The data come from the RNA Mapping Database (RMDB), library OK2TST. This 177-nucleotide RNA was probed chemically with DMS and 2A3. For DMS, 1,266 sequencing reads were counted. 2A3 adducts were read by reverse transcription with SuperScript II with manganese.
RNA sequence: GGGAACGACUCGAGUAGAGUCGAAAAUCGCAACAAGAAGAUGGACACCUCGAACAAAUCCUCGAACAUCUCAAGAGCCCAAGCGGAGAGUUCGAUCGAUUCGUUGCUGGCUACAUUGAGGAAGGAAGUAAAUACGCCAGUUCGCUGGCGUAUUUACAAAAGAAACAACAACAACAAC
Reactivity to DMS in 0.01 (KOAc 150mM, MgCl2 10mM, bicine 150mM(pH8.5), 24C), signal-to-noise 2, nucleotides 027 to 126: u020c060g030c060a120a060c060a090a190g020a070a060g000a050u000g000g010a140c300a060c020c000u000c110g010a060a030c010a030a040a020u010c000c060u000c010g010a060a050c040a100u000c000u010c010a150a130g000a160g000c040c040c100a090a100g000c110g020g010a020g010a070g010u000u000c070g000a020u020c190g000a060u000u000c070g020u000u000g040c060u000g010g010c000u000a120c020a050u000u000g000a040g000g000a070a060g000g040a080a090
Reactivity to 2A3 in 0.01 (KOAc 150mM, MgCl2 10mM, bicine 150mM(pH8.5), 24C), signal-to-noise 1, nucleotides 027 to 126: u040c000g050c040a000a100c040a030a120g110a040a040g070a070u070g020g000a000c000a050c040c000u040c050g050a020a020c020a100a030a040u000c070c000u030c010g000a050a020c050a300u000c030u010c010a110a180g030a070g090c040c040c030a010a030g000c070g000g040a030g010a000g010u040u040c050g020a130u080c030g010a000u050u020c020g090u090u080g190c080u030g000g010c020u030a030c040a090u040u080g000a030g040g090a070a030g050g010a010a190

For 2A3, 1,077 sequencing reads were counted.